This 177-nucleotide RNA was probed chemically with DMS and 2A3. The data come from the RNA Mapping Database (RMDB), library OK1LIB. For 2A3 the reverse transcriptase was SuperScript II with manganese. For DMS the reverse transcriptase was MarathonRT. As a SHAPE reagent, 2A3 marks flexible, mostly unpaired nucleotides at the ribose 2'-OH.
[RMDB]
RNA sequence: GGGAACGACUCGAGUAGAGUCGAAAACAUUUGUAUAUAAACGUCGUCUACCUUUCCAUGCUAAAAGGUUCAAUGAUUGGUUAGAAAGCAUGUCAAAUAAUGUCGUUCGAUCAAAAGGUAUCGUAUGAUCACUGACUAACUUCGGUUAGUCAGUGAUAAAAGAAACAACAACAACAAC
Reactivity to DMS in 0.01 (KOAc 150mM, MgCl2 10mM, bicine 150mM(pH8.5), 24C), signal-to-noise 3, nucleotides 027 to 126: c080a130u000u030u000g030u020a050u020a080u030a040a120a130c060g010u010c090g000u000c030u000a070c010c000u010u020u020c090c080a090u010g000c080u010a060a080a070a100g000g010u010u050c100a040a050u040g020a110u010u000g000g010u020u000a070g020a090a040a060g010c040a010u000g000u000c140a040a050a050u040a050a070u000g010u000c050g000u020u000c000g000a060u010c020a030a020a070a050g010g020u010a010u000c030g010u040a050u000g010
Reactivity to 2A3 in 0.01 (KOAc 150mM, MgCl2 10mM, bicine 150mM(pH8.5), 24C), signal-to-noise 5, nucleotides 027 to 126: c040a050u100u210u190g170u040a080u030a020u100a140a150a050c060g020u040c000g040u010c040u010a040c000c000u000u100u000c060c020a010u030g050c040u100a080a060a050a080g080g000u150u040c050a050a050u140g010a130u060u150g060g030u030u070a100g050a040a060a010g020c020a020u030g030u130c110a010a050a120u210a060a100u210g040u060c020g020u090u050c020g030a050u030c070a000a110a070a020g130g000u090a030u060c050g020u090a070u100g140